[RMDB]
RNA sequence: GGGAACGACUCGAGUAGAGUCGAAAACAUCGGCCGCGACAUCAUCCAGCACCACACGAUCUUCUGGCCAGCGAUGCUCGAGGGUGCAGGCUACAACGAGCCCCGUGGCGUCGCCGCGACUGGCUUCGAUCGUACUACCAUUCGUGGUAGUACGAUCAAAAGAAACAACAACAACAAC
Reactivity to 2A3 in 0.01 (KOAc 150mM, MgCl2 10mM, bicine 150mM(pH8.5), 24C), signal-to-noise 6, nucleotides 027 to 126: c030a050u130c040g050g000c020c020g020c040g040a040c010a070u080c000a030u000c020c020a020g010c030a020c020c010a030c010a030c060g070a080u010c030u110u020c020u100g040g000c000c000a010g010c010g030a030u050g000c000u020c040g040a260g030g020g000u060g010c050a030g040g050c040u150a080c060a190a040c060g030a010g020c000c000c010c000g030u070g020g010c020g020u040c020g000c000c020g040c010g060a080c050u030g020g020c000u080u070c070
Reactivity to DMS in 0.01 (KOAc 150mM, MgCl2 10mM, bicine 150mM(pH8.5), 24C), signal-to-noise 3, nucleotides 027 to 126: c070a080u010c040g000g000c040c020g010c060g000a040c040a060u000c020a040u000c020c040a090g030c030a070c050c050a070c140a080c090g010a080u010c090u000u020c060u000g000g000c060c020a080g010c010g020a020u000g000c010u010c030g040a140g010g000g000u000g050c040a160g000g010c090u030a050c130a100a110c010g000a210g000c010c000c060c010g000u050g000g000c010g070u000c030g000c070c070g020c070g000a070c080u000g010g000c010u000u020c230
The data come from the RNA Mapping Database (RMDB), library OK1LIB.
Structure probing data (2A3 and DMS) for a 177-nucleotide construct.
For 2A3 the reverse transcriptase was SuperScript II with manganese.
The RNA was probed in 150 mM KOAc, 10 mM MgCl2 and 150 mM bicine (pH 8.5) at 24 C.